Source information: This 177-nucleotide RNA was probed chemically with 2A3 and DMS. High 2A3 reactivity points to a flexible backbone, as in loops and unpaired stretches. For 2A3, 922 sequencing reads were counted. For DMS the reverse transcriptase was MarathonRT. Values cover nucleotides 27 to 126. High DMS reactivity at an A or C suggests that its Watson-Crick edge is free. Values are in units of 0.01, from 0 to 300, in steps of 10.
[RMDB]
RNA sequence: GGGAACGACUCGAGUAGAGUCGAAAAAUAGUCAAGAUUUCUAAAUUCGUCUAGGAAGUAUAUGAAUCCUUCAGGAUGGAUUGUGAUGUCUAGCUUUCUUAGAAGGUUCUUGAUUUGGACCCCUAAACCCUAUACCGAGCUUCGGCUCGGUAUAGGGAAAAGAAACAACAACAACAAC
Reactivity to 2A3 in 0.01 (KOAc 150mM, MgCl2 10mM, bicine 150mM(pH8.5), 24C), signal-to-noise 3, nucleotides 027 to 126: a000u140a000g020u000c000a000a010g000a030u010u040u000c030u050a000a000a060u090u050c060g060u000c040u010a030g060g070a130a060g050u070a100u040a060u300g080a030a010u030c020c020u130u170c070a130g230g030a130u190g050g030a030u050u010g070u060g060a100u050g070u090c000u000a030g030c000u070u080u030c010u030u000a010g000a070a000g050g050u110u020c010u010u020g010a000u050u060u060g060g020a090c000c000c000c000u020a100a080a120
Reactivity to DMS in 0.01 (KOAc 150mM, MgCl2 10mM, bicine 150mM(pH8.5), 24C), signal-to-noise 1, nucleotides 027 to 126: a020u000a010g070u000c000a110a010g000a060u040u000u000c020u000a030a030a000u000u020c090g030u000c000u000a120g000g000a000a030g000u030a160u030a120u070g000a200a070u000c110c000u000u000c300a170g010g000a100u010g050g000a060u000u020g040u000g000a050u000g000u000c000u000a140g000c000u010u000u000c020u000u000a000g020a040a060g000g010u030u000c010u000u000g000a020u000u000u040g000g050a120c000c000c010c160u010a090a030a090